[RMDB]
RNA sequence: GGGAACGACUCGAGUAGAGUCGAAAAUUUCUGGGAGGACACUCCCUUCUGAUGGUGAAUGGGAACUCCCUUCCUCCUGCAGCAGCCUGCCUGCAGCUGUCCUGGUAGAACAGUGUGGACAUUGCAGCAAAAGGACCAGGUUCGCCUGGUCCUUUUGAAAAGAAACAACAACAACAAC
Reactivity to DMS in 0.01 (KOAc 150mM, MgCl2 10mM, bicine 150mM(pH8.5), 24C), signal-to-noise 4, nucleotides 027 to 126: u010u020u020c070u010g000g000g000a020g010g020a070c300a130c140u000c000c000c010u000u010c010u010g020a150u040g000g000u010g010a050a030u010g030g000g020a060a090c090u010c010c010c020u000u000c000c020u000c070c030u000g010c060a030g010c080a070g010c060c040u010g000c110c010u010g000c030a060g000c100u000g010u010c000c030u010g000g010u010a100g000a080a120c140a060g010u040g010u010g000g010a060c050a060u010u010g010c060a070g000
Reactivity to 2A3 in 0.01 (KOAc 150mM, MgCl2 10mM, bicine 150mM(pH8.5), 24C), signal-to-noise 2, nucleotides 027 to 126: u110u090u040c110u060g000g000g010a010g030g060a010c030a080c140u090c030c020c000u010u020c010u020g130a120u110g070g160u150g060a050a030u130g010g010g000a040a060c030u040c000c000c000u000u020c000c000u020c000c040u030g010c000a020g000c000a000g050c040c020u060g000c020c000u010g000c000a010g030c000u030g020u000c010c010u050g060g080u110a060g050a150a030c040a090g090u100g050u080g140g030a000c000a030u020u080g020c000a010g000